[RMDB]
RNA sequence: GGGAACGACUCGAGUAGAGUCGAAAAGAAUACUCAGACAAAGCCCAGACUUUGGAGAGCGCCACAUUGCGUUAUUCCUUAAAUCCCAAUGGGCGAAGAAAAAUGAGAAAAUCGGCGCAGUCAACGAGAUACUCACCUAUUUCGAUAGGUGAGUAUCAAAAGAAACAACAACAACAAC
Reactivity to DMS in 0.01 (KOAc 150mM, MgCl2 10mM, bicine 150mM(pH8.5), 24C), signal-to-noise 5, nucleotides 027 to 126: g000a200a100u010a140c020u000c040a060g010a160c140a060a110a260g020c010c030c010a050g020a160c080u000u010u000g010g000a060g010a020g020c010g010c000c210a090c280a080u010u010g010c010g010u000u000a090u000u000c010c020u000u000a040a070a090u010c020c010c020a110a130u010g000g010g010c010g010a050a070g000a040a080a060a080a110u000g000a040g000a100a030a090a090u000c060g010g000c060g020c030a060g010u000c070a070a040c140g010a110
Reactivity to 2A3 in 0.01 (KOAc 150mM, MgCl2 10mM, bicine 150mM(pH8.5), 24C), signal-to-noise 4, nucleotides 027 to 126: g030a050a060u130a180c030u030c050a010g040a110c070a080a120a010g000c010c010c010a050g060a090c080u090u070u080g010g000a030g010a010g010c000g000c030c020a200c070a260u070u240g000c010g010u020u020a140u180u050c000c000u040u090a160a160a090u030c010c010c000a010a030u020g010g000g000c030g010a040a010g110a000a080a020a010a010u100g000a040g010a060a050a010a050u060c040g020g020c020g000c040a010g090u060c040a040a040c040g030a030